[RMDB]
RNA sequence: GGGAACGACUCGAGUAGAGUCGAAAAUAAGAAUGGCGGCAGAAGAAGGAAACAAUGAAGUAGUAAAGCUCUUGUUACUGUGGGAGGGAAACCUUCAUUAUGCCAUCAUAGGAGCUUUAGAGGGCGAGACGAAGUAUGUUUUCGAACAUACUUCGUCAAAAGAAACAACAACAACAAC
Reactivity to DMS in 0.01 (KOAc 150mM, MgCl2 10mM, bicine 150mM(pH8.5), 24C), signal-to-noise 4, nucleotides 027 to 126: u010a100a120g010a140a020u000g020g030c100g010g010c020a020g000a110a040g000a070a050g020g000a150a050a120c040a050a030u000g010a130a110g010u020a050g020u000a040a040a090g000c090u000c050u000u000g010u000u000a090c070u000g020u000g010g010g010a130g000g000g000a080a050a090c010c000u000u000c020a030u010u000a060u000g010c020c020a030u020c050a020u010a070g000g010a080g000c030u000u000u000a080g020a100g020g000g010c110g010a160
Reactivity to 2A3 in 0.01 (KOAc 150mM, MgCl2 10mM, bicine 150mM(pH8.5), 24C), signal-to-noise 3, nucleotides 027 to 126: u140a010a030g120a040a040u030g020g020c000g020g000c030a010g010a070a010g010a010a000g030g000a150a050a000c010a020a060u180g040a060a010g030u100a000g020u040a020a030a080g030c010u010c020u120u090g030u040u030a040c040u040g000u090g090g030g060a100g040g000g000a030a040a080c000c000u000u000c000a010u050u080a010u040g000c010c010a000u010c000a000u010a020g050g020a030g000c000u090u100u060a070g060a060g060g020g030c030g010a030
This 177-nucleotide RNA was probed chemically with DMS and 2A3. The RNA was probed in 150 mM KOAc, 10 mM MgCl2 and 150 mM bicine (pH 8.5) at 24 C. The 2A3 profile rests on 3,929 reads. For 2A3 the reverse transcriptase was SuperScript II with manganese.